Chemical mapping of a 177-nucleotide RNA with DMS and 2A3. For 2A3, 58,728 sequencing reads were counted. The reactions ran in a buffer of 150 mM KOAc, 10 mM MgCl2 and 150 mM bicine (pH 8.5), at 24 C. For 2A3 the reverse transcriptase was SuperScript II with manganese.
[RMDB]
RNA sequence: GGGAACGACUCGAGUAGAGUCGAAAAUAAGCUGACCAGCUAUGAGGUCAUACAUCGUCAUAGUACUAAGAAGAGAGAUCUUCGAGGACAGAGAUGUCCAAGACGACGAGAACAUCGUCGUCGAUACGAACUGGUCGUAUUUCGAUAUGACUAGUUCAAAAGAAACAACAACAACAAC
Reactivity to DMS in 0.01 (KOAc 150mM, MgCl2 10mM, bicine 150mM(pH8.5), 24C), signal-to-noise 7, nucleotides 027 to 126: u040a080a110g010c170u000g010a030c010c010a200g000c010u010a010u010g000a050g000g010u000c030a080u040a080c220a070u020c130g020u000c010a020u000a010g000u000a130c240u020a090a140g000a010a010g000a010g000a180g000a100u000c000u000u000c000g000a150g000g000a010c010a010g000a140g000a090u000g010u000c000c010a120a080g000a000c000g000a000c000g000a010g000a180a160c300a110u000c000g020u000c000g010u000c000g000a120u080a050c300
Reactivity to 2A3 in 0.01 (KOAc 150mM, MgCl2 10mM, bicine 150mM(pH8.5), 24C), signal-to-noise 9, nucleotides 027 to 126: u160a020a010g090c050u020g010a000c000c000a000g000c000u000a000u010g010a010g000g010u010c020a010u140a100c080a090u120c090g060u000c010a000u000a010g010u000a060c050u080a070a040g000a000a000g000a000g010a000g010a040u000c000u000u000c010g020a080g000g000a000c000a000g040a000g010a020u020g000u000c000c000a020a030g000a000c000g000a000c000g010a010g030a110a100c120a230u010c000g000u000c000g000u000c020g010a020u070a100c140